[RMDB]
RNA sequence: GGGAACGACUCGAGUAGAGUCGAAAAUCGAAAUCAUCGGGAGUGAUCCAGAUGACGGUCCUGCCAUGAGACCGCAACGAGAGCAUGUCGCAUCGAAUGGAUUCGGGGAGUCGGCAGCUUGCCCCACUAAGGCAGACGUUGUUCGCAACGUCUGCAACCAGCUUGGUAACUUCGGUUACCAAGCUGGAAAAGAAACAACAACAACAAC
Reactivity to 2A3 in 0.01 (KOAc 150mM, MgCl2 10mM, bicine 150mM(pH8.5), 24C), signal-to-noise 2, nucleotides 027 to 156: u070c010g020a080a010a100u010c000a000u030c000g010g020g000a000g030u080g120a080u000c000c000a000g020a020u000g000a000c000g000g000u020c000c000u050g160c060c050a100u120g000a040g010a130c000c000g080c040a080a050c020g100a010g000a000g040c040a120u070g030u050c000g030c020a040u100c010g030a010a040u060g080g140a140u120u000c050g000g000g030g000a090g130u170c020g000g040c000a000g010c000u040u080g020c010c000c030c000a060c030u100a070a080g090g030c000a000g000a000c010g030u010u000g000u020u050c210g010c110a000a000c000g010u000c000u000g000c000a000a000

Chemical mapping of a 207-nucleotide RNA with 2A3. Conditions: 150 mM KOAc, 10 mM MgCl2 and 150 mM bicine (pH 8.5), 24 C. The data come from the RNA Mapping Database (RMDB), library M2RFPK. For 2A3 the reverse transcriptase was SuperScript II with manganese.